RNA sequence: GGGAACGACUCGAGUAGAGUCGAAAAAUGAUAUAGACAUCAGUCUCUGAGCUGGAGGAGGACAAAGGCAGCGGUCCUGUGAAUUCUAUGCUCUAGCUUGGGUUAAGGGAUUUGGAAUUGCACUUGUUUCAGAGAGCUCCCUCUUUGCCCACUAGCAGGAUUUAAAUUACUUCGGUAAUUUAAAUCCAAAAGAAACAACAACAACAAC
Reactivity to 2A3 in 0.01 (KOAc 150mM, MgCl2 10mM, bicine 150mM(pH8.5), 24C), signal-to-noise 1, nucleotides 027 to 156: a000u120g010a090u120a050u120a170g090a120c020a050u060c040a000g060u050c040u000c040u130g000a030g000c000u010g000g040a010g020g010a000g020g040a020c000a000a140a010g050g020c020a000g080c080g100g030u070c000c010u040g000u030g050a020a050u060u000c050u080a060u210g050c010u000c030u040a030g000c000u050u000g000g000g050u040u020a030a030g080g020g000a070u150u080u080g050g050a100a060u070u090g040c050a020c050u090u040g050u050u300u150c070a010g040a010g000a020g070c000u050c010c000c000u000c000u010u040u010g020c010c000c000a020c040u040a020g040c000a020
An RNA of 207 nucleotides, treated with 2A3 and read out base by base. For 2A3, 472 sequencing reads were counted. The RNA was probed in 150 mM KOAc, 10 mM MgCl2 and 150 mM bicine (pH 8.5) at 24 C. Source: RMDB library OK3TST, as collected in RNAgym. Reactivities are rounded to 0.1 and cut off at 0 and 3.